Structure probing data (DMS and 2A3) for a 177-nucleotide construct.
DMS (dimethyl sulfate) methylates the pairing face of unpaired adenines and cytosines.
DMS adducts were read by reverse transcription with MarathonRT.
For DMS, 1,704 sequencing reads were counted.
The reactions ran in a buffer of 150 mM KOAc, 10 mM MgCl2 and 150 mM bicine (pH 8.5), at 24 C.
RNA sequence: GGGAACGACUCGAGUAGAGUCGAAAAACACCUGAUACGUCAGGUGAGGCUUCGGUGCUGGGGAGCGGCCCCCGGGCGGGCCUCUGCUCUGGCCCCUCCUGGGGCCCGCACUCUCGCUCCGGGCCAAGGUACGAUAUAUGUUCGCAUAUAUCGUACCAAAAGAAACAACAACAACAAC
Reactivity to DMS in 0.01 (KOAc 150mM, MgCl2 10mM, bicine 150mM(pH8.5), 24C), signal-to-noise 2, nucleotides 027 to 126: a140c050a000c030c000u010g010a010u000a080c160g000u000c000a000g030g000u000g000a040g000g020c000u000u070c000g000g000u000g050c000u030g050g020g000g000a070g050c010g040g000c220c030c000c000c080g010g010g010c300g000g000g000c000c010u020c160u030g000c110u060c140u010g000g030c000c020c010c000u000c000c040u000g000g000g000g010c050c000c010g000c020a040c000u000c010u020c300g000c000u000c020c030g000g000g000c020c010a030a030
Reactivity to 2A3 in 0.01 (KOAc 150mM, MgCl2 10mM, bicine 150mM(pH8.5), 24C), signal-to-noise 2, nucleotides 027 to 126: a000c010a000c000c000u000g000a000u010a070c250g100u000c020a010g000g010u020g030a080g000g020c040u300u300c170g000g010u020g000c010u040g030g010g000g020a070g010c010g000g010c000c000c000c020c010g000g000g010c000g000g000g000c020c020u040c100u240g110c050u050c080u060g000g000c000c000c030c000u030c000c000u010g000g000g000g000c000c000c000g000c000a000c000u020c000u010c050g000c010u000c000c000g000g000g000c010c000a000a050